[RMDB]
RNA sequence: GGGAACGACUCGAGUAGAGUCGAAAAAGCAACGAGUGUGUGUGGGACGUUUUAUCCCAAGCUCUGAGUAGAGCACGCGCUCACACACACCGCGAGCGAGCAUCAGCAGACCGCAAACGCUGGUAAAAAUACGCAUAAAAUUCGUUUUAUGCGUAUUAAAAGAAACAACAACAACAAC
Reactivity to DMS in 0.01 (KOAc 150mM, MgCl2 10mM, bicine 150mM(pH8.5), 24C), signal-to-noise 9, nucleotides 027 to 126: a090g010c020a200a050c020g000a280g020u000g010u000g010u000g020u000g000g010g010a070c010g010u000u010u010u010a130u010c040c050c040a090a110g010c000u000c000u000g010a180g020u010a060g010a010g010c010a080c090g000c060g000c000u000c000a010c000a000c000a010c000a010c000c010g010c030g000a150g010c020g000a140g010c110a040u000c030a030g010c020a100g010a180c040c050g010c110a060a070a090c140g000c010u000g000g010u010a010a060a080
Reactivity to 2A3 in 0.01 (KOAc 150mM, MgCl2 10mM, bicine 150mM(pH8.5), 24C), signal-to-noise 9, nucleotides 027 to 126: a000g050c040a050a040c010g030a090g050u010g000u000g000u000g000u010g020g010g030a040c010g010u010u050u130u230a150u110c020c030c010a010a010g000c000u000c010u070g300a220g170u300a020g170a000g000c010a010c030g030c010g000c000u010c000a000c000a000c000a000c000a000c000c010g040c010g010a020g010c020g000a030g010c010a030u050c010a000g000c010a010g080a140c020c060g010c100a070a060a020c060g000c020u030g010g020u080a050a020a010

About this RNA: Source: RMDB library M2PK90, as collected in RNAgym. Chemical mapping of a 177-nucleotide RNA with DMS and 2A3. For 2A3, 22,031 sequencing reads were counted. For DMS the reverse transcriptase was MarathonRT. 2A3 adducts were read by reverse transcription with SuperScript II with manganese. The DMS profile rests on 32,295 reads. High 2A3 reactivity points to a flexible backbone, as in loops and unpaired stretches.